An RNA of 177 nucleotides, treated with 2A3 and DMS and read out base by base. As a SHAPE reagent, 2A3 marks flexible, mostly unpaired nucleotides at the ribose 2'-OH. Conditions: 150 mM KOAc, 10 mM MgCl2 and 150 mM bicine (pH 8.5), 24 C.
[RMDB]
RNA sequence: GGGAACGACUCGAGUAGAGUCGAAAAUGAGGCGACACCGAUACUGACGGUGCGGGUGAGCACCUCACCGCCGAUAGCGACGUGGUCCUUGAGCUGGUCGCGAAGACGUUCGGCGAGCGGUUGAGCGUCCGCUCUGUAGAUUCGUCUACAGAGCGGAAAAAGAAACAACAACAACAAC
Reactivity to 2A3 in 0.01 (KOAc 150mM, MgCl2 10mM, bicine 150mM(pH8.5), 24C), signal-to-noise 3, nucleotides 027 to 126: u140g020a030g060g060c010g000a020c020a000c020c010g020a070u080a150c080u070g020a030c080g000g000u020g010c020g020g060g080u190g110a080g000c010a010c000c000u010c000a020c010c000g000c000c000g020a020u020a030g020c010g000a020c090g050u150g010g040u100c060c040u110u180g070a070g060c060u030g010g010u000c010g010c000g010a040a020g120a040c090g030u050u010c000g000g000c000g010a040g020c010g010g000u020u070g010a030g000c010g020
Reactivity to DMS in 0.01 (KOAc 150mM, MgCl2 10mM, bicine 150mM(pH8.5), 24C), signal-to-noise 5, nucleotides 027 to 126: u010g000a070g010g010c010g020a270c230a030c020c000g010a140u010a060c230u010g020a060c150g020g020u000g010c060g000g000g020u010g010a150g000c040a060c010c000u010c010a100c130c000g020c010c000g010a040u000a090g000c000g000a150c010g040u000g000g000u000c020c130u020u010g020a140g020c080u000g010g000u000c010g020c000g010a090a110g010a130c210g020u010u000c000g010g000c020g010a130g010c020g000g000u000u000g010a300g020c040g000